[RMDB]
RNA sequence: GGGAACGACUCGAGUAGAGUCGAAAAAGGCUGGUUCCGAGGCUUUUUGGAUGCCCUUAACCAAGCAGGUUAUUCUGGACUUUGUGAAGCCAUUGAAAGUUGGGAUUUCCAAAAAAUUGAGAAGUUGACUUUCUACGCAAUUCGUUGCGUAGAAAGUAAAAGAAACAACAACAACAAC
Reactivity to 2A3 in 0.01 (KOAc 150mM, MgCl2 10mM, bicine 150mM(pH8.5), 24C), signal-to-noise 2, nucleotides 027 to 126: a000g080g000c000u010g020g020u080u000c080c060g070a090g020g020c000u080u120u000u000u020g100g030a090u190g060c000c000c000u020u030a000a000c030c000a010a000g150c020a040g070g000u020u090a060u060u000c010u030g160g070a190c000u120u080u030g070u080g090a050a020g010c020c010a080u040u030g090a210a140a010g080u050u000g000g000g010a090u000u000u000c000c000a000a030a060a070a120a120u150u240g040a160g010a150a010g040u050u210g010
Reactivity to DMS in 0.01 (KOAc 150mM, MgCl2 10mM, bicine 150mM(pH8.5), 24C), signal-to-noise 2, nucleotides 027 to 126: a050g000g000c030u010g040g010u020u000c040c040g060a120g020g010c010u020u050u020u010u050g030g020a110u030g000c040c000c000u030u000a040a040c030c030a080a090g020c170a100g010g000u010u000a020u010u020c040u000g010g010a070c050u010u000u050g000u020g000a090a030g020c030c060a080u040u030g000a020a050a100g050u020u000g000g000g020a070u000u000u000c000c030a000a040a080a040a150a140u050u000g000a230g020a010a150g010u010u000g010